An RNA of 177 nucleotides, treated with 2A3 and DMS and read out base by base. The data come from the RNA Mapping Database (RMDB), libraries RFM100 and RFMREP. The reactions ran in a buffer of 150 mM KOAc, 10 mM MgCl2 and 150 mM bicine (pH 8.5), at 24 C.

[RMDB]
RNA sequence: GGGAACGACUCGAGUAGAGUCGAAAAAGCCUCGCUUACGAGCGAGGCAGCUGUACAUGAUGACAACUGGCUCCCUCUACUGAACUGCCAUGAGGAAACUGCCAUGUCACCCUUCUGACUACAGCAAAUUGUCCUUUAUAUUCGUAUAAAGGACAAUAAAAGAAACAACAACAACAAC
Reactivity to 2A3 in 0.01 (KOAc 150mM, MgCl2 10mM, bicine 150mM(pH8.5), 24C), signal-to-noise 9, nucleotides 027 to 126: a000g000c000c000u000c000g000c000u060u060a080c270g100a020g000c000g000a000g010g000c000a010g000c000u010g000u020a010c010a070u140g020a050u080g010a060c010a130a060c150u030g010g000c000u030c010c040c000u010c010u060a140c070u080g150a300a090c090u150g110c110c040a110u190g010a010g020g030a050a110a080c100u080g000c000c000a010u050g000u000c010a040c010c010c000u070u070c030u040g050a060c040u010a010c010a000g000c000a020a070
Reactivity to DMS in 0.01 (KOAc 150mM, MgCl2 10mM, bicine 150mM(pH8.5), 24C), signal-to-noise 9, nucleotides 027 to 126: a050g000c000c000u000c000g020c000u000u010a100c170g010a040g020c000g010a010g000g030c000a000g010c000u000g000u000a010c060a050u010g010a120u010g000a020c030a040a120c240u010g000g010c010u010c090c010c000u000c010u010a140c170u020g000a100a080c180u010g010c120c100a100u020g000a020g010g000a030a080a090c190u020g010c000c000a030u000g000u000c000a040c030c020c090u000u010c050u010g010a180c250u000a010c000a010g020c010a100a080